[RMDB]
RNA sequence: GGGAACGACUCGAGUAGAGUCGAAAAGAUAUGGAUUGGACGUCUCUAGCGUGGCCUUGGAUUUAUACCGAAACCAUCGGAAACGAUGGAUAAGGUAUUGUCAGGCUCGGGCGUCCAAUCCUAAGUCCUAAUACUCGAUCUUCGGAUCGAGUAUUAGAAAAGAAACAACAACAACAAC
Reactivity to DMS in 0.01 (KOAc 150mM, MgCl2 10mM, bicine 150mM(pH8.5), 24C), signal-to-noise 3, nucleotides 027 to 126: g000a100u010a180u010g000g010a030u000u010g010g000a030c010g020u010c000u000c150u000a110g020c120g010u020g000g000c010c100u030u010g020g000a120u010u020u000a020u010a020c000c000g000a150a220a300c000c000a010u020c000g010g010a070a060a180c010g010a020u000g000g000a030u000a060a300g000g010u000a000u000u010g020u000c000a020g000g000c000u000c140g000g000g000c000g000u000c010c000a000a000u020c000c000u000a020a080g000u000c020
Reactivity to 2A3 in 0.01 (KOAc 150mM, MgCl2 10mM, bicine 150mM(pH8.5), 24C), signal-to-noise 2, nucleotides 027 to 126: g000a010u090a040u190g020g000a030u010u010g000g000a010c010g060u010c040u040c070u300a070g040c160g230u130g030g000c000c090u160u290g150g000a090u110u300u190a060u170a050c000c000g050a250a070a010c010c010a000u010c000g020g000a060a010a000c000g000a010u000g000g000a020u060a020a010g000g000u000a010u010u020g000u010c010a000g020g170c000u000c000g000g000g010c000g000u000c000c000a010a000u000c000c000u000a000a000g000u000c000